Chemical mapping of a 177-nucleotide RNA with 2A3 and DMS. The 2A3 profile rests on 6,906 reads.

[RMDB]
RNA sequence: GGGAACGACUCGAGUAGAGUCGAAAAGAGGGUGAAGACGGCCAGAACUUGGAGAAGAGACGGAAUCUUCUGAACUGCCUCAUCGUCCGAAUCCUCAAGGCCCAUGGAGAUGAGGGGCUGCACAUUGCUCUUUCUGUGAAUUCGUUCACAGAAAGAGAAAAGAAACAACAACAACAAC
Reactivity to 2A3 in 0.01 (KOAc 150mM, MgCl2 10mM, bicine 150mM(pH8.5), 24C), signal-to-noise 5, nucleotides 027 to 126: g010a000g010g000g000u020g000a020a010g010a020c040g030g030c040c010a020g030a120a120c060u120u150g050g040a080g010a110a010g020a010g030a050c140g060g090a110a140u020c010u090u020c030u060g020a090a050c030u040g040c000c010u060c030a090u040c000g060u010c010c000g020a010a040u020c000c010u010c020a020a030g050g000c030c000c020a030u140g100g020a140g010a100u120g030a060g000g050g010g000c010u060g000c060a070c020a160u110u250g040
Reactivity to DMS in 0.01 (KOAc 150mM, MgCl2 10mM, bicine 150mM(pH8.5), 24C), signal-to-noise 5, nucleotides 027 to 126: g010a060g030g010g020u000g010a210a090g010a030c060g010g010c070c030a050g010a160a120c180u010u000g020g020a100g010a050a060g010a030g030a110c120g000g010a140a150u000c040u010u010c100u010g010a030a160c070u000g000c040c010u000c030a090u010c040g010u000c010c000g000a170a030u000c010c000u000c030a100a070g010g000c020c010c010a120u000g020g010a120g010a050u000g000a080g030g010g000g000c070u000g000c100a060c160a120u000u010g000